[RMDB]
RNA sequence: GGGAACGACUCGAGUAGAGUCGAAAACAACUGUUAUCUUGCCACUGCAUUAUUAACACUCCAACAAAUAGAGUUGAAGUUUAAUCCACCUGCUCUACAAAGGGCUGGUGAAGCUGCUAACUUUUGUCGACCAUUCCGUUCGCGGAAUGGAAAAGAAACAACAACAACAAC
Reactivity to 2A3 in 0.01 (KOAc 150mM, MgCl2 10mM, bicine 150mM(pH8.5), 24C), signal-to-noise 9, nucleotides 027 to 129: c000a000a000c030u020g030u040u020a060u050c070u090u130g040c040c060a160c110u200g000c020a060u030u050a000u040u050a120a010c020a010c100u020c020c020a020a020c030a040a170a160u290a050g080a020g050u020u030g020a040a010g010u030u020u080a050a040u060c030c000a000c000c000u040g000c010u010c000u040a130c100a060a190a080g020g000g000c010u030g000g000u000g010a010a000g000c020u040g020c020u020a010a030c000u030u050u040u040g100u050c040g030a060
Reactivity to DMS in 0.01 (KOAc 150mM, MgCl2 10mM, bicine 150mM(pH8.5), 24C), signal-to-noise 4, nucleotides 027 to 129: c050a030a030c100u000g010u060u020a000u020c060u060u000g040c040c260a130c180u140g020c060a050u010u070a000u050u020a000a000c120a080c080u050c030c050a050a050c100a040a090a070u090a010g070a080g060u000u100g040a000a060g000u020u050u010a050a160u040c130c000a040c020c020u010g040c000u020c000u040a110c300a080a110a110g000g000g000c030u050g030g050u010g030a000a000g010c030u030g040c130u060a070a030c050u040u000u010u060g040u050c040g040a190

This 170-nucleotide RNA was probed chemically with 2A3 and DMS. 2A3 adducts were read by reverse transcription with SuperScript II with manganese. For 2A3, 18,327 sequencing reads were counted. The DMS profile rests on 13,555 reads. The RNA was probed in 150 mM KOAc, 10 mM MgCl2 and 150 mM bicine (pH 8.5) at 24 C. DMS (dimethyl sulfate) methylates the pairing face of unpaired adenines and cytosines.